[RMDB]
RNA sequence: GGGAACGACUCGAGUAGAGUCGAAAAGAUAUGGACAAGAACGAUAAGCGUGGGAUCGGAAACGAUCCCAACGCUUUUGACGUUCGUCCUAAGUCAAAACCGCUCAGAAGUUCGCUUCUGAGCGGAAGCUGUACUAUUCCUUCGGGAAUAGUACAGCAAAAGAAACAACAACAACAAC
Reactivity to DMS in 0.01 (KOAc 150mM, MgCl2 10mM, bicine 150mM(pH8.5), 24C), signal-to-noise 2, nucleotides 027 to 126: g000a050u000a300u010g000g010a010c000a150a170g000a000a000c000g000a150u000a030a010g010c000g050u000g000g000g020a000u000c000g000g000a060a120a180c000g010a000u000c010c000c000a000a020c000g000c000u000u010u000u000g040a140c080g000u000u000c010g000u000c000c000u020a060a160g020u000c040a060a010a090a160c000c000g000c010u010c000a000g010a010a000g030u000u020c300g010c000u000u000c000u000g000a010g000c000g000g000a000a020
Reactivity to 2A3 in 0.01 (KOAc 150mM, MgCl2 10mM, bicine 150mM(pH8.5), 24C), signal-to-noise 1, nucleotides 027 to 126: g040a020u090a010u120g030g010a020c110a200a300g050a020a000c020g030a100u010a110a040g000c010g000u030g000g010g000a010u010c030g010g000a100a010a020c020g000a000u030c040c000c020a000a000c000g030c010u000u000u010u040g050a030c000g010u000u000c000g000u010c020c010u030a200a010g020u030c010a000a010a110a180c000c010g000c010u000c010a020g000a040a010g040u080u220c220g050c190u000u000c000u000g010a000g000c000g000g000a000a000
The record gives the reactivity of an RNA of 177 nucleotides to DMS and 2A3. For DMS the reverse transcriptase was MarathonRT. Conditions: 150 mM KOAc, 10 mM MgCl2 and 150 mM bicine (pH 8.5), 24 C. For DMS, 1,258 sequencing reads were counted. The data come from the RNA Mapping Database (RMDB), library TTRDEL.